[RMDB]
RNA sequence: GGGAACGACUCGAGUAGAGUCGAAAAAGUUAGGUUCGUUAUGGUGCAACUCUUUAAGGCAAUAACGAACUAAUUCUAAGCAAGUAAUGGAGAAAUGCCAGGGUCACUAUCUAGCCAUAAUAGUGCUGUAAGUGACUUAGAUUCGUCUAAGUCACAAGCAAUUCAGUGUAUUCGUACACUGAAUUGCAAAAGAAACAACAACAACAAC
Reactivity to 2A3 in 0.01 (KOAc 150mM, MgCl2 10mM, bicine 150mM(pH8.5), 24C), signal-to-noise 7, nucleotides 027 to 156: a000g110u100u060a070g030g120u020u000c000g000u000u000a020u040g250g100u110g030c070a140a250c090u100c090u190u290u180a140a030g090g000c010a020a020u000a000a000c000g000a000a000c000u000a000a000u040u020c030u080a050a020g040c030a050a010g040u120a100a080u100g070g030a060g040a100a060a010u090g030c050c030a080g010g020g030u060c010a000c040u020a030u080c010u020a030g040c010c010a020u040a160a010u040a090g070u030g010c050u040g090u140a160a090g000u000g000a000c000u000u000a000g000a000u060u050c100g000u000c150u000a000a000g000u000c010a000c000a010a010
Reactivity to DMS in 0.01 (KOAc 150mM, MgCl2 10mM, bicine 150mM(pH8.5), 24C), signal-to-noise 3, nucleotides 027 to 156: a050g020u000u000a080g020g000u000u000c010g020u000u000a040u000g010g030u000g010c030a130a180c170u010c130u010u000u000a060a120g020g010c020a090a020u000a000a010c020g000a030a020c000u000a030a020u000u000c030u000a100a140g020c070a050a120g000u000a090a080u010g000g000a140g020a110a080a100u020g010c010c020a130g020g010g010u000c050a050c010u000a040u000c060u000a130g000c030c040a060u000a050a070u000a050g020u000g010c060u000g020u000a100a130g010u000g010a020c000u000u000a010g010a050u000u000c300g010u010c000u000a010a010g010u000c000a000c010a040a180

The record gives the reactivity of an RNA of 207 nucleotides to 2A3 and DMS. The DMS profile rests on 5,100 reads. The reactions ran in a buffer of 150 mM KOAc, 10 mM MgCl2 and 150 mM bicine (pH 8.5), at 24 C.